[RMDB]
RNA sequence: GGGAACGACUCGAGUAGAGUCGAAAAACGGUCGCCUGUACGCAGGCGACCGACUGCGAGUAAGGCCCGUCCGAGGCUGUGAUGCCUGCGGCUGCGGGAUGGGAGCAAUAGGACGGGGUUCGCACAAAAGGCAGUCUAAUUUCGAUUAGACUGCCUUAAAAGAAACAACAACAACAAC
Reactivity to 2A3 in 0.01 (KOAc 150mM, MgCl2 10mM, bicine 150mM(pH8.5), 24C), signal-to-noise 2, nucleotides 027 to 126: a000c000g000g000u040c020g000c020c010u060g000u040a060c120g050c080a010g000g110c010g000a000c000c000g000a000c000u000g020c030g000a000g030u070a130a080g120g300c000c000c000g000u000c000c000g000a000g070g000c000u020g070u180g200a140u240g140c000c010u050g000c040g080g170c160u300g000c000g010g000g010a000u000g060g090g030a010g000c000a160a300u030a060g000g000a000c000g000g000g000g000u040u050c000g000c080a080c050a010a080
Reactivity to DMS in 0.01 (KOAc 150mM, MgCl2 10mM, bicine 150mM(pH8.5), 24C), signal-to-noise 1, nucleotides 027 to 126: a050c010g050g070u000c000g080c000c010u000g030u060a140c220g070c000a000g010g000c000g000a000c000c000g010a000c060u000g010c000g100a030g070u010a050a040g040g040c020c000c000g030u000c000c010g040a180g000g030c000u000g030u050g000a070u030g000c000c000u000g020c000g050g000c220u070g010c010g020g000g000a040u010g010g070g010a000g000c000a010a130u000a190g000g010a010c100g010g000g060g010u040u030c000g000c000a140c150a070a050